Structure probing data (2A3 and DMS) for a 177-nucleotide construct.
It was measured as part of the RMDB libraries RFM100 and RFMREP.
Conditions: 150 mM KOAc, 10 mM MgCl2 and 150 mM bicine (pH 8.5), 24 C.
RNA sequence: GGGAACGACUCGAGUAGAGUCGAAAAAGAUUAUCCAAACUCUCAGGUAUUGGCUACUAUGUAAGCCAUAUUCAUACCGGAUCGUGUCAUGACUAUGAUACUCAUCAGGAUGGUGCCCACCCGCCCGCGUCUUAGUUAUAUUCGUAUAACUAAGACGAAAAGAAACAACAACAACAAC
Reactivity to 2A3 in 0.01 (KOAc 150mM, MgCl2 10mM, bicine 150mM(pH8.5), 24C), signal-to-noise 9, nucleotides 027 to 126: a000g110a070u110u100a040u070c030c010a050a050a090c040u050c010u030c060a040g050g000u050a090u070u060g010g050c010u020a020c020u080a090u300g090u140a110a010g000c000c000a010u020a020u060u110c040a010u030a090c000c010g030g010a030u050c060g010u010g020u040c020a020u040g110a130c080u190a060u080g020a020u020a040c020u030c080a080u020c010a040g050g010a030u040g030g020u050g020c010c000c000a030c000c020c010g030c000c010c000g060
Reactivity to DMS in 0.01 (KOAc 150mM, MgCl2 10mM, bicine 150mM(pH8.5), 24C), signal-to-noise 9, nucleotides 027 to 126: a090g010a100u020u010a050u010c020c020a090a110a140c110u010c060u010c080a090g010g000u000a030u000u010g010g010c000u000a040c050u030a130u040g020u010a070a050g010c010c010a030u020a030u020u020c150a110u000a040c020c010g000g000a030u020c140g000u000g000u010c020a030u000g010a130c170u020a070u000g010a040u000a030c030u010c100a060u010c080a080g010g000a050u010g000g010u000g000c020c010c020a100c060c020c050g000c020c020c030g010